[RMDB]
RNA sequence: GGGAACGACUCGAGUAGAGUCGAAAAGAUAUGGACACGGACAGGGAGCUCCAUCGGAAACGAUAGAGCGAAGAACUGUCGUGUCCUAAGUCAAAGUGCUUUUGUCAGUUCGCUGACAAAAGCACAACGUUCCAAUCAAGUUCGCUUGAUUGGAACGAAAAGAAACAACAACAACAAC
Reactivity to DMS in 0.01 (KOAc 150mM, MgCl2 10mM, bicine 150mM(pH8.5), 24C), signal-to-noise 2, nucleotides 027 to 126: g000a030u020a300u000g010g000a040c000a020c000g000g000a030c000a010g020g000g010a180g000c000u000c000c040a010u020c010g010g000a080a050a140c000g010a010u000a040g000a020g020c000g010a020a080g000a180a170c000u000g000u000c010g000u000g000u000c000c020u010a000a080g000u000c030a090a130a140g010u000g000c000u010u000u000u000g000u000c000a000g010u010u010c260g020c000u000g000a030c000a000a000a000a010g000c010a000c000a010a040
Reactivity to 2A3 in 0.01 (KOAc 150mM, MgCl2 10mM, bicine 150mM(pH8.5), 24C), signal-to-noise 3, nucleotides 027 to 126: g010a010u070a020u130g010g000a000c020a000c060g280g130a020c010a020g040g070g020a010g020c010u000c000c010a000u000c000g030g020a080a040a020c000g000a000u020a020g020a010g060c010g070a110a030g010a030a020c010u010g000u000c000g000u000g000u000c000c000u020a050a000g050u010c030a060a040a120g000u030g020c000u000u020u020u010g000u010c000a020g020u050u120c180g020c250u000g000a000c000a010a000a010a000g030c000a000c010a000a000
An RNA of 177 nucleotides, treated with DMS and 2A3 and read out base by base. The data come from the RNA Mapping Database (RMDB), library TTRDEL. Reactivities are given for positions 27 through 126. The reactions ran in a buffer of 150 mM KOAc, 10 mM MgCl2 and 150 mM bicine (pH 8.5), at 24 C. The 2A3 profile rests on 7,291 reads.